[RMDB]
Record summary: An RNA of 207 nucleotides, treated with 2A3 and read out base by base. Conditions: 150 mM KOAc, 10 mM MgCl2 and 150 mM bicine (pH 8.5), 24 C.

RNA sequence: GGGAACGACUCGAGUAGAGUCGAAAACGGGCCUCAUUCCGCUCCCAUCGGGAUGUACGUCCGGACGCAAUAUGGGAUAGGGAAGUGUCAUGCCUGGGGGCAUCUCCCGAGAUUUACUAGGCUGGUCAAACUCCGCGCCGACCUUCUUGGGCGUGGACCCAGAGAACAGGUUCGCCUGUUCUCUGGGAAAAGAAACAACAACAACAAC
Reactivity to 2A3 in 0.01 (KOAc 150mM, MgCl2 10mM, bicine 150mM(pH8.5), 24C), signal-to-noise 2, nucleotides 027 to 156: c010g020g010g000c000c000u000c000a000u000u000c000c020g010c000u000c000c000c010a000u030c000g000g020g000a000u000g000u020a020c000g010u020c000c010g090g120a080c120g050c130a030a020u100a010u200g000g000g010a020u010a020g000g000g000a000a000g060u000g000u030c020a010u040g010c000c000u010g000g000g000g000g020c000a000u000c020u000c050c010c020g000a000g020a000u220u280u090a220c000u000a000g000g020c040u070g050g010u070c120a100a050a080c030u000c000c000g000c000g020c010c000g050a080c020c000u210u260c120u150u220g080g010g000c010g000u020g000g000a010
For 2A3 the reverse transcriptase was SuperScript II with manganese.
The data come from the RNA Mapping Database (RMDB), library RSTRND.